[RMDB]
RNA sequence: GGGAACGACUCGAGUAGAGUCGAAAAUAGAAACAGGGUUUUCACCCUUCCUUUCUUCGGGUUUCCUUCCUCUGCUUGCGGCCUCGCCCGGAGUCUUCGAAUCCAGCGCAGGUUCUGACGCGACCGGUGGCACGCCGAGUCGCUCACUGCCUCAACCCAGUAUUUUCUUCUUCGGAAGAAAAUACUGAAAAGAAACAACAACAACAAC
Reactivity to 2A3 in 0.01 (KOAc 150mM, MgCl2 10mM, bicine 150mM(pH8.5), 24C), signal-to-noise 2, nucleotides 027 to 156: u090a010g050a030a070a060c280a150g040g010g000u100u120u210u290c160a110c010c010c000u010u100c010c010u060u050u000c000u070u060c070g120g000g000u020u090u110c000c000u060u030c030c010u070c020u030g060c050u070u110g050c040g040g000c000c000u030c040g040c020c010c020g080g010a030g010u000c050u050u040c110g100a090a080u000c040c060a050g000c030g000c160a020g020g020u120u080c060u100g030a010c060g010c000g010a010c010c000g020g030u000g080g280c160a040c160g000c000c020g030a080g010u010c000g020c020u020c000a020c010u000g010c000c010u060c040a050a090c000c030
The record gives the reactivity of an RNA of 207 nucleotides to 2A3. The data come from the RNA Mapping Database (RMDB), library VIROID. 2A3 adducts were read by reverse transcription with SuperScript II with manganese.